[RMDB]
RNA sequence: GGGAACGACUCGAGUAGAGUCGAAAAGACGCGAGAGACGCGAGACGCGCAAUGGCAGAAGCCGCAAUAGAUGAUACGACGCAAGAGGCAAGACGGAGAGCGCGCAACUUGCAUAAAUAACCAAGAAGCGUAUUACCAUCUUCGGAUGGUAAUACGCAAAAGAAACAACAACAACAAC
Reactivity to DMS in 0.01 (KOAc 150mM, MgCl2 10mM, bicine 150mM(pH8.5), 24C), signal-to-noise 1, nucleotides 027 to 126: g010a090c110g050c060g000a020g020a080g000a120c100g000c090g050a030g000a050c100g000c010g000c030a070a090u000g000g060c090a180g000a210a170g040c000c000g040c050a080a000u070a020g000a080u000g000a150u010a110c000g000a030c180g090c060a000a050g000a100g050g000c020a000a000g000a090c180g010g000a080g000a150g000c070g000c080g000c020a120a080c050u000u000g000c020a050u030a040a100a040u030a000a240c080c000a100a080g000a180a120
Reactivity to 2A3 in 0.01 (KOAc 150mM, MgCl2 10mM, bicine 150mM(pH8.5), 24C), signal-to-noise 3, nucleotides 027 to 126: g040a010c020g050c060g030a090g000a030g010a120c020g040c020g000a020g010a060c020g040c000g000c060a050a080u090g090g000c000a000g030a200a000g080c000c000g030c000a030a020u100a150g100a060u190g030a000u030a180c100g030a020c100g020c030a000a030g050a020g080g030c050a100a040g050a020c020g020g000a070g000a000g040c030g000c000g000c030a010a010c020u000u000g020c000a020u130a120a140a030u110a000a030c080c070a060a030g150a070a030
Structure probing data (DMS and 2A3) for a 177-nucleotide construct. The DMS profile rests on 1,350 reads. The RNA was probed in 150 mM KOAc, 10 mM MgCl2 and 150 mM bicine (pH 8.5) at 24 C. The data come from the RNA Mapping Database (RMDB), library OK1LIB.